[RMDB]
RNA sequence: GGGAACGACUCGAGUAGAGUCGAAAACAUCGUAUAUUUCGAAAGCUUUUUGAUAAAUAAUUGGGUCAUAAGACGGAUUUCUUAUCUUGGUAAAAUGCCGAUCAAUAAUAUCAAUAGAUCUAUGGUGUCGUCCUACAAAUUUCGAUUUGUAGGACGAAAAAGAAACAACAACAACAAC
Reactivity to DMS in 0.01 (KOAc 150mM, MgCl2 10mM, bicine 150mM(pH8.5), 24C), signal-to-noise 2, nucleotides 027 to 126: c020a030u000c010g020u000a030u010a080u010u020u000c040g010a130a160a160g010c060u000u010u000u000u000g010a010u010a040a080a110u010a070a050u010u000g020g000g020u000c020a030u000a060a140g010a120c300g020g000a050u010u000u030c160u020u010a040u000c050u000u010g020g040u000a030a050a100a060u000g000c030c040g010a060u010c020a030a050u010a030a140u000a020u000c010a010a020u000a050g010a060u000c110u000a040u000g000g000u010g000
Reactivity to 2A3 in 0.01 (KOAc 150mM, MgCl2 10mM, bicine 150mM(pH8.5), 24C), signal-to-noise 2, nucleotides 027 to 126: c000a020u060c010g030u070a120u030a050u190u100u060c040g050a130a050a050g090c010u120u220u010u070u040g030a020u020a060a150a100u130a080a030u050u020g140g000g020u160c030a010u020a070a050g040a010c000g040g030a060u030u190u000c050u040u170a050u030c030u040u160g000g000u070a180a180a000a050u080g050c030c000g020a010u010c010a000a040u070a100a020u030a000u040c010a010a090u010a090g020a020u030c010u050a030u060g030g030u000g000